[RMDB]
RNA sequence: GGGAACGACUCGAGUAGAGUCGAAAAGAUAUGGAUUCAGAACUACACGGCAAUUGAGCUAUGAAGUCGGAAACGAUGGAGCUCAAGCCGUGCUGAAUCCUAAGUCAAAGCUAGGUUCGCCUAGCAACAGGUGACAUAUGUUCGCAUAUGUCACCUGAAAAGAAACAACAACAACAAC
Reactivity to 2A3 in 0.01 (KOAc 150mM, MgCl2 10mM, bicine 150mM(pH8.5), 24C), signal-to-noise 3, nucleotides 027 to 126: g030a020u080a040u140g000g000a000u000u000c000a020g010a080a060c090u180a030c240a000c010g010g000c030a140a300u050u010g000a000g010c000u080a260u300g040a040a020g010u000c000g000g040a070a050a030c020g010a000u030g030g080a000g010c000u000c010a000a020g080c000c000g010u010g000c000u000g010a020a010u000c010c000u010a070a010g020u010c020a130a070a000g000c000u000a000g000g090u070u050c300g100c060c000u000a000g000c010a000a000
Reactivity to DMS in 0.01 (KOAc 150mM, MgCl2 10mM, bicine 150mM(pH8.5), 24C), signal-to-noise 2, nucleotides 027 to 126: g010a040u010a300u000g010g000a000u000u020c010a010g000a040a040c070u010a300c010a000c000g020g010c010a160a220u000u000g010a010g010c000u000a180u000g000a110a150g000u000c000g010g010a100a120a110c020g000a020u010g010g000a010g000c000u010c000a010a040g010c010c000g000u000g040c000u020g010a040a000u000c000c010u010a010a090g020u000c000a060a090a090g010c000u000a000g010g000u000u000c290g000c000c000u000a000g000c010a050a080
Conditions: 150 mM KOAc, 10 mM MgCl2 and 150 mM bicine (pH 8.5), 24 C. An RNA of 177 nucleotides, treated with 2A3 and DMS and read out base by base. Reactivities are given for positions 27 through 126. For DMS, 1,914 sequencing reads were counted.